Chemical mapping of a 177-nucleotide RNA with DMS and 2A3.
[RMDB]
RNA sequence: GGGAACGACUCGAGUAGAGUCGAAAACAGAGUGUAUUUGUAAAUUCAGUAACCCACCAGCACGUGUAAACGCACGCAAAAGCCCUUUAUGGCAAUGUGUCUCGGCUGGUUAUGGUACACCAAUCUGGAUAGACCUAACCUUCGGGUUAGGUCUAUCAAAAGAAACAACAACAACAAC
Reactivity to DMS in 0.01 (KOAc 150mM, MgCl2 10mM, bicine 150mM(pH8.5), 24C), signal-to-noise 2, nucleotides 027 to 126: c140a060g000a140g000u010g000u000a010u000u010u000g020u010a050a130a100u040u000c160a060g000u020a080a090c030c000c160a130c010c010a010g020c020a090c020g030u000g030u000a040a020a070c170g020c160a080c000g010c040a070a010a180a130g000c010c000c250u030u080u010a080u030g010g000c010a020a240u000g030u000g000u000c010u000c030g000g010c010u000g010g000u000u020a040u000g000g020u000a010c010a010c000c060a130a090u070c120u000g000
Reactivity to 2A3 in 0.01 (KOAc 150mM, MgCl2 10mM, bicine 150mM(pH8.5), 24C), signal-to-noise 3, nucleotides 027 to 126: c060a010g050a030g120u030g090u000a060u020u170u060g210u150a070a090a160u200u130c010a020g070u020a070a100c000c010c000a000c000c000a000g000c020a040c190g000u020g010u000a010a010a000c020g070c100a000c020g000c000a010a010a020a150g000c000c020c000u140u280u150a160u250g020g010c000a000a030u010g000u000g000u000c000u000c010g010g030c000u010g000g000u000u010a040u070g000g000u000a010c000a020c020c010a030a110u030c050u050g040